RNA sequence: GGGAACGACUCGAGUAGAGUCGAAAACCGGAAUGGUUCCGCCGUGAUCGGGCCAUGCUAUAGUUGCCAACGACAACUAUGCUCCGGUUGCUCAGGCAGCGUAACGCUGCUUGAAAGACCACAUGAAUUAGCGCGACAUUGUUCGCAAUGUCGCGAAGAUUUAGGGGCAGUUCGCUGCCCCUAAAUCAAAAGAAACAACAACAACAAC
Reactivity to 2A3 in 0.01 (KOAc 150mM, MgCl2 10mM, bicine 150mM(pH8.5), 24C), signal-to-noise 1, nucleotides 027 to 156: c020c000g000g000a030a060u020g010g010u300u300c000c020g030c070c050g300u230g090a120u160c020g000g000g020c030c000a000u070g010c020u200a000u000a060g000u000u000g050c060c060a260a070c220g080a100c000a000a000c000u000a000u000g000c000u040c000c000g000g000u000u000g000c030u020c000a000g000g000c020a000g000c000g120u110a040a040c300g010c010u000g000c020u010u000g000a080a000a000g010a010c000c000a040c060a150u270g120a250a300u090u160a280g000c050g000c000g000a010c020a030u000u000g020u010u010c060g010c080a000a000u000g000u000c010g000c010g000a000a000
Chemical mapping of a 207-nucleotide RNA with 2A3. For 2A3 the reverse transcriptase was SuperScript II with manganese. 2A3 is a SHAPE reagent: it acylates the 2'-hydroxyl of flexible nucleotides of all four kinds. The 2A3 profile rests on 447 reads. The reactions ran in a buffer of 150 mM KOAc, 10 mM MgCl2 and 150 mM bicine (pH 8.5), at 24 C.